The record gives the reactivity of an RNA of 177 nucleotides to DMS.
RNA sequence: GGGAACGACUCGAGUAGAGUCGAAAAGUUUUUAACGCGUGUGCACCCGCUAACACGAAUUACCCAGUUAUUUUCGACUUUUCUCGAGUCGUUAUAGCGUGAGUUGGCGGAGUUCUCCGCGAAAUAAUCAAUGGUUUACUUUCGAGUAAACCAUUGAAAAAGAAACAACAACAACAAC
Reactivity to DMS in 0.01 (KOAc 150mM, MgCl2 10mM, bicine 150mM(pH8.5), 24C), signal-to-noise 3, nucleotides 027 to 126: g010u000u010u010u010u020a020a070c140g030c010g010u010g020u000g020c070a080c080c020c050g000c040u000a050a060c020a040c020g010a090a100u010u010a100c060c040c040a110g010u000u000a040u000u000u010u000c010g010a020c000u000u000u010u000c010u000c000g010a010g010u000c000g000u000u000a010u010a080g010c020g000u010g010a060g010u000u010g020g010c010g010g000a090g000u000u000c080u000c010c000g010c010g000a040a050a060u000a080a110

Background
Source: RMDB library M2PK90, as collected in RNAgym.